[RMDB]
RNA sequence: GGGAACGACUCGAGUAGAGUCGAAAAGUCCUCGUAGGCGUCCGUCCUACGUCCGACAAGACGACCAAAACACCCCGUGUCUCGCUGUGCCUUCGGGUGCCGAGCACUCCCUCCCUCCGCCGGGUCUAACCGCAAGACGGUUCGCCGUCUUGCGGUUAAAAGAAACAACAACAACAAC
Reactivity to 2A3 in 0.01 (KOAc 150mM, MgCl2 10mM, bicine 150mM(pH8.5), 24C), signal-to-noise 1, nucleotides 027 to 126: g030u000c000c010u000c000g020u000a020g000g070c040g090u090c070c050g100u110c040c040u000a040c000g000u040c040c040g010a020c020a020a010g010a040c040g050a040c060c030a020a000a110a000c050a060c010c000c000c010g020u000g050u010c020u000c020g030c070u090g000u010g000c010c000u090u160c080g100g000g000u020g000c010c010g010a010g000c000a010c050u020c000c000c000u000c020c000c000u050c030c020g060c020c030g000g010g000u010c020u010